[RMDB]
RNA sequence: GGGAACGACUCGAGUAGAGUCGAAAAACCUAAUAUUCGUAUUAGGUAAAAAGCGUACUACCACGUGUUGCCAUAUUAAGCGGUUCCCAAAUAGGAACCGAAAGCAUAUGGAACUACAACCCGUGGUAUCGCAAAAAGCAGGUCUUCGGACCUGCAAACAGUCUGUAAACUUCGGUUUACAGACUGUAAAAGAAACAACAACAACAAC
Reactivity to 2A3 in 0.01 (KOAc 150mM, MgCl2 10mM, bicine 150mM(pH8.5), 24C), signal-to-noise 1, nucleotides 027 to 156: a000c000c000u000a000a000u020a010u030u040c120g040u010a000u000u000a000g040g000u060a080a000a020a010a060g020c040g020u080a120c060u020a000c010c010a010c010g000u020g010u000u000g030c000c030a000u000a010u020u070a030a110g110c000g010g020u000u040c040c000c000a080a140a020u150a080g000g000a000a000c000c000g040a110a020a010g110c040a010u000a000u000g000g040a050a020c030u150a010c030a010a000c050c010c000g000u010g000g000u000a000u070c000g010c030a000a000a000a000a150g020c010a000g000g030u000c000u060u110c150g100g020a000c000c000u000g010c000a000a000
Reactivity to DMS in 0.01 (KOAc 150mM, MgCl2 10mM, bicine 150mM(pH8.5), 24C), signal-to-noise 1, nucleotides 027 to 156: a040c000c020u000a010a010u000a060u000u010c220g050u000a020u010u000a000g000g000u020a010a060a120a110a070g040c010g060u000a070c160u000a080c010c000a020c010g010u000g000u000u000g000c000c000a040u000a040u000u020a170a200g010c000g050g000u000u000c020c000c040a010a130a200u010a080g020g010a030a020c000c000g020a020a020a090g060c260a070u020a010u000g000g000a160a100c050u020a240c000a000a020c000c060c020g000u010g020g000u000a010u000c000g000c000a070a070a130a130a130g000c000a000g030g020u000c000u010u010c150g000g010a010c000c000u060g010c000a000a080